RNA sequence: GGGAACGACUCGAGUAGAGUCGAAAACAAACGGCAUUCAGGAACGCCACCACGCCGCAGCAGCGCGAAGAGUUGCGUAACAACAUCAUUCUUGAAACCAGCACCAUGCAGGCAAAAAUCGCUCAGACGUUCCAUUUUGUUUCGACAAAAUGGAACGAAAAGAAACAACAACAACAAC
Reactivity to DMS in 0.01 (KOAc 150mM, MgCl2 10mM, bicine 150mM(pH8.5), 24C), signal-to-noise 2, nucleotides 027 to 126: c080a090a060a050c060g010g030c010a150u030u010c070a050g030g030a120a090c080g000c010c000a120c060c040a000c060g010c060c000g000c010a110g010c070a120g070c010g000c080g000a010a040g000a120g010u000u000g120c130g010u030a030a100c100a020a070c050a110u000c000a040u040u030c070u000u000g000a010a120a070c160c070a090g010c060a100c020c020a070u030g000c000a070g000g000c030a000a000a070a070a010u000c090g040c160u000c000a060g030a170
Reactivity to 2A3 in 0.01 (KOAc 150mM, MgCl2 10mM, bicine 150mM(pH8.5), 24C), signal-to-noise 4, nucleotides 027 to 126: c030a010a070a000c050g060g000c010a050u040u070c020a100g080g000a060a030c030g020c010c000a010c000c010a030c030g030c010c040g000c040a040g030c010a030g000c060g020c020g060a070a040g070a040g080u030u030g020c020g060u070a070a080c050a020a020c020a110u140c000a030u150u030c020u030u090g080a060a020a060c010c000a010g010c000a010c020c000a030u080g030c010a010g020g000c000a020a010a060a040a100u080c050g010c020u040c020a050g030a100